[RMDB]
RNA sequence: GGGAACGACUCGAGUAGAGUCGAAAACAGAUCGCGCGGCGAAACGCCUGUCACGAUCUUGCCGAGGAAAUUGACGCCAUUGACCGCCUCGACAGCACUGCCACCAUCGGACGAACCGCCGCCAAGAGUAAUUUACUGACUUCGGUCAGUAAAUUACAAAAGAAACAACAACAACAAC
Reactivity to 2A3 in 0.01 (KOAc 150mM, MgCl2 10mM, bicine 150mM(pH8.5), 24C), signal-to-noise 2, nucleotides 027 to 126: c020a000g040a050u010c000g000c000g000c010g060g010c000g080a300a100a050c120g050c010c000u090g150u150c010a000c080g030a000u000c000u000u060g000c000c000g050a070g060g090a080a090a130u140u140g050a040c050g000c030c040a060u050u080g040a070c020c010g000c020c010u060c040g010a040c000a000g040c010a010c070u030g030c000c010a010c010c010a060u070c030g060g000a030c020g000a050a030c030c040g000c030c000g000c020c000a080a010g080a010
Reactivity to DMS in 0.01 (KOAc 150mM, MgCl2 10mM, bicine 150mM(pH8.5), 24C), signal-to-noise 2, nucleotides 027 to 126: c140a060g010a030u000c020g010c040g000c070g000g010c000g010a080a100a140c100g000c030c010u000g050u010c020a050c020g010a000u000c020u000u000g000c020c000g000a070g020g000a040a060a100u000u020g020a130c100g030c020c030a090u000u000g020a130c050c050g010c010c000u000c030g000a040c120a090g000c070a070c070u000g010c000c030a070c080c040a060u020c070g010g010a090c050g000a060a100c110c040g000c030c040g040c060c060a070a110g010a150

Record summary:
This 177-nucleotide RNA was probed chemically with 2A3 and DMS. 2A3 adducts were read by reverse transcription with SuperScript II with manganese. Reactivities are given for positions 27 through 126. It was measured as part of the RMDB library OK2TST. For DMS, 1,694 sequencing reads were counted.